[RMDB]
RNA sequence: GGGAACGACUCGAGUAGAGUCGAAAAACAACAGAUAGCUGGAACCAGCGUAGAAUUCUACGCAUAUCCAUAGCGAAUGGUACCUGUAAAGAAAAUAAUUGUGGAUGUACAAGUACCAACAGCCGUGAAUGCCAUGGUGAUGUCAAUCACAUAUGCAGUGAGUAUGAUACUUCGGUAUCAUACUCACAAAAGAAACAACAACAACAAC
Reactivity to 2A3 in 0.01 (KOAc 150mM, MgCl2 10mM, bicine 150mM(pH8.5), 24C), signal-to-noise 5, nucleotides 027 to 156: a000c040a010a010c020a040g090a100u170a030g030c010u010g020g020a110a140c110c020a030g000c000g000u010a000g040a150a300u300u100c000u020a010c010g000c010a020u030a030u060c010c000a040u090a040g020c020g060a050a030u020g000g000u020a030c000c000u000g030u040a050a100a010g140a060a140a050a020u240a090a090u170u160g070u090g100g070a040u050g000u020a010c010a010a050g020u000a000c000c000a020a020c040a050g010c020c020g070u060g110a100a050u130g020c000c060a040u080g020g040u030g010a050u040g100u140c050a070a030u050c000a040c010a050u120a050u110g060c020a020
Reactivity to DMS in 0.01 (KOAc 150mM, MgCl2 10mM, bicine 150mM(pH8.5), 24C), signal-to-noise 2, nucleotides 027 to 156: a080c040a050a100c080a090g000a110u010a160g030c060u000g000g010a180a140c100c020a070g000c000g000u010a020g020a240a270u000u000c010u010a030c000g040c040a160u010a090u010c020c020a050u000a020g020c030g030a150a150u000g000g000u000a010c000c000u020g030u010a020a040a080g020a150a060a070a110u020a030a160u010u010g050u000g030g020a300u010g000u000a030c010a050a020g030u000a050c030c030a010a040c090a280g030c000c030g030u010g000a030a030u000g000c070c020a080u000g000g010u020g000a060u000g030u000c070a100a080u000c030a080c010a080u010a100u000g070c110a130

Structure probing data (2A3 and DMS) for a 207-nucleotide construct. Reactivities are rounded to 0.1 and cut off at 0 and 3. Conditions: 150 mM KOAc, 10 mM MgCl2 and 150 mM bicine (pH 8.5), 24 C. For 2A3 the reverse transcriptase was SuperScript II with manganese. DMS adducts were read by reverse transcription with MarathonRT.